[RMDB]
RNA sequence: GGGAACGACUCGAGUAGAGUCGAAAAACGGAUGGUACGCCAUCCGACCAUUGGGUAGAAGCGUUCAAUCAGCACCAUGACGGUGCAGAUGGGAAAUUGCCCAUGAUACGCACCAUACGUGGUGCGAAAAAGCCAUCGGUGUUCGCACCGAUGGCAAGAUAUAGACACCCUUCGGGGUGUCUAUAUCAAAAGAAACAACAACAACAAC
Reactivity to 2A3 in 0.01 (KOAc 150mM, MgCl2 10mM, bicine 150mM(pH8.5), 24C), signal-to-noise 2, nucleotides 027 to 156: a010c000g000g000a000u010g050g000u080a020c190g060c050c010a010u000c000c000g010a000c000c010a090u080u160g010g000g040u120a080g050a180a020g040c090g020u070u050c050a080a070u050c030a020g000c000a000c010c000a060u190g100a110c130g000g010u000g000c040a020g020a020u030g010g020g010a040a100a180u090u050g070c000c010c000a000u030g050a010u050a040c050g010c000a010c000c000a000u040a110c140g060u020g000g000u030g000c000g020a030a010a000a000a000g000c010c000a000u010c010g000g000u010g080u050u060c190g030c090a000c000c000g010a000u000g000g000c000a000a000
Reactivity to DMS in 0.01 (KOAc 150mM, MgCl2 10mM, bicine 150mM(pH8.5), 24C), signal-to-noise 1, nucleotides 027 to 156: a130c010g000g010a000u000g000g050u000a150c300g070c000c000a000u000c000c000g050a020c040c000a260u080u030g000g080g080u000a020g000a060a250g000c250g030u010u000c030a050a030u000c050a220g010c000a010c000c000a190u020g000a130c260g090g040u000g000c000a020g030a020u020g000g010g000a030a200a050u000u010g020c010c010c020a030u020g000a150u000a070c090g060c000a010c020c000a050u000a060c140g020u000g020g000u010g020c000g000a000a040a040a070a150g000c010c010a010u000c010g000g030u000g050u000u000c260g040c000a040c050c010g040a010u000g000g000c000a000a000